[RMDB]
RNA sequence: GGGAACGACUCGAGUAGAGUCGAAAAGUAUAGUGGGUAGAAUCCAGGGAUGCUGUUAAGCAUGGAACAGCCCCUUACAACAAAAAAUUAUGUAGCCUAAAAUGGCAGUGUUGCCAAGAUUGAGAAAUUAUGCUUUAAAUGUGUUUUUAUAUAUGGCAUGUCGUAUUCUUUUCGAAGAAUACGACAUAAAAGAAACAACAACAACAAC
Reactivity to 2A3 in 0.01 (KOAc 150mM, MgCl2 10mM, bicine 150mM(pH8.5), 24C), signal-to-noise 3, nucleotides 027 to 156: g080u050a070u200a130g080u170g000g000g060u070a050g070a210a050u060c060c040a010g080g010g030a060u180g000c020u000g030u110u070a120a030g030c060a070u080g010g010a020a000c000a000g000c000c010c000c000u000u090a010c020a060a010c030a010a130a020a050a020a000u140u150a150u190g070u030a060g000c000c010u120a080a040a070a060u100g040g000c010a010g060u060g090u220u080g040c000c010a010a030g020a040u110u200g020a080g040a060a080a070u150u070a040u080g050c000u080u090u180a040a160a100u060g010u000g030u000u070u000u020u050a100u030a020u010a050u090g050g010c040
Reactivity to DMS in 0.01 (KOAc 150mM, MgCl2 10mM, bicine 150mM(pH8.5), 24C), signal-to-noise 2, nucleotides 027 to 156: g030u000a070u010a060g060u010g020g000g000u000a070g020a210a180u000c020c090a170g010g000g010a110u010g030c000u000g010u000u000a130a130g030c090a090u000g020g010a060a110c030a230g000c020c020c000c020u000u000a040c030a100a150c050a000a040a090a070a080a130u000u010a130u000g010u000a130g000c020c020u000a080a050a140a140u010g020g040c000a080g020u010g000u010u000g000c000c020a040a100g010a110u000u000g000a160g010a090a080a070u020u000a050u000g020c030u000u010u010a040a040a060u010g010u020g010u000u000u000u050u000a080u010a130u000a100u030g000g010c120
Chemical mapping of a 207-nucleotide RNA with 2A3 and DMS. The reactions ran in a buffer of 150 mM KOAc, 10 mM MgCl2 and 150 mM bicine (pH 8.5), at 24 C. For DMS the reverse transcriptase was MarathonRT. Values cover nucleotides 27 to 156.